Source information: Structure probing data (DMS and 2A3) for a 177-nucleotide construct. For DMS the reverse transcriptase was MarathonRT. The RNA was probed in 150 mM KOAc, 10 mM MgCl2 and 150 mM bicine (pH 8.5) at 24 C. For 2A3, 1,782 sequencing reads were counted.
[RMDB]
RNA sequence: GGGAACGACUCGAGUAGAGUCGAAAAUUUAUCUCUUCUCCUAGGUGACAAGCUACUUAGACUCAUGUGACAGAAGCAACAGAGUAAAAGUCUGUUGAGGAAGAGAGAGGCUAGACCAGAUGUAGGCGGACCAUUUAAGAUUCGUCUUAAAUGGUCCAAAAGAAACAACAACAACAAC
Reactivity to DMS in 0.01 (KOAc 150mM, MgCl2 10mM, bicine 150mM(pH8.5), 24C), signal-to-noise 4, nucleotides 027 to 126: u000u000u000a130u000c010u010c020u000u000c020u000c030c030u000a150g030g020u000g010a070c070a100a090g020c070u000a060c080u000u010a050g000a110c040u010c060a100u000g030u010g010a140c140a120g020a120a140g010c050a020a050c020a040g000a030g010u010a030a080a070a140g000u010c020u000g000u000u000g010a070g000g000a050a070g010a030g000a050g010a090g020g010c080u010a070g010a160c010c030a100g000a080u020g000u000a070g010g020c240
Reactivity to 2A3 in 0.01 (KOAc 150mM, MgCl2 10mM, bicine 150mM(pH8.5), 24C), signal-to-noise 2, nucleotides 027 to 126: u040u040u030a120u010c000u000c000u080u000c060u000c010c030u040a020g000g130u080g080a030c040a120a030g010c020u080a010c020u060u120a020g040a050c000u010c070a150u070g040u050g120a110c060a090g080a150a010g080c020a000a050c000a020g050a020g020u070a030a220a000a010g090u000c020u030g030u040u050g030a050g000g030a030a030g030a010g000a000g020a020g020g040c040u050a010g050a090c020c010a050g030a210u190g100u140a040g110g040c060